Chemical mapping of a 207-nucleotide RNA with 2A3 and DMS.
RNA sequence: GGGAACGACUCGAGUAGAGUCGAAAACAUAAGACCUCAGAGCUAAUGAGCCACCUACCUACCCAAGGUGAAAGCUCCUUCUCUCGCAAUGUGUAACUCAUGAUUCUCAUGACCCCUGGUUGGAGAGCGCGCUAACACGCCUUCGGGCGUGUUAGAAUGACAAUACCUAGUUCGCUAGGUAUUGUCAAAAAGAAACAACAACAACAAC
Reactivity to 2A3 in 0.01 (KOAc 150mM, MgCl2 10mM, bicine 150mM(pH8.5), 24C), signal-to-noise 1, nucleotides 027 to 156: c010a010u170a120a090g040a030c030c020u080c050a000g020a010g040c000u050a150a000u090g030a010g070c050c000a000c020c000u120a080c030c040u080a080c000c010c030a040a040g000g000u040g040a220a010a000g010c000u020c030c050u070u010c030u000c010u010c000g000c040a030a120u080g040u080g010u110a080a070c000u000c030a040u040g050a140u300u010c120u020c060a000u110g010a070c000c000c000c040u040g020g020u020u030g000g010a090g000a020g010c050g010c030g010c040u020a010a000c000a000c000g000c000c000u050u040c160g030g010g040c010g000u000g000u000u000a000g000a020a000
Reactivity to DMS in 0.01 (KOAc 150mM, MgCl2 10mM, bicine 150mM(pH8.5), 24C), signal-to-noise 1, nucleotides 027 to 156: c060a060u010a070a110g010a060c020c020u010c080a080g020a100g030c030u010a100a080u000g010a140g020c030c000a040c020c000u010a080c000c030u000a130c050c050c060a170a090g050g000u000g000a080a130a130g000c010u000c010c050u000u000c030u000c030u000c020g000c050a080a080u010g000u000g000u010a040a030c050u000c040a040u000g000a150u000u010c060u000c010a080u000g000a150c020c000c010c060u000g020g050u010u000g000g000a070g000a100g000c040g000c080g000c000u030a040a010c020a010c010g020c000c010u010u000c280g080g040g050c020g000u000g010u000u000a030g050a040a100

The data come from the RNA Mapping Database (RMDB), library M2RFPK. High 2A3 reactivity points to a flexible backbone, as in loops and unpaired stretches.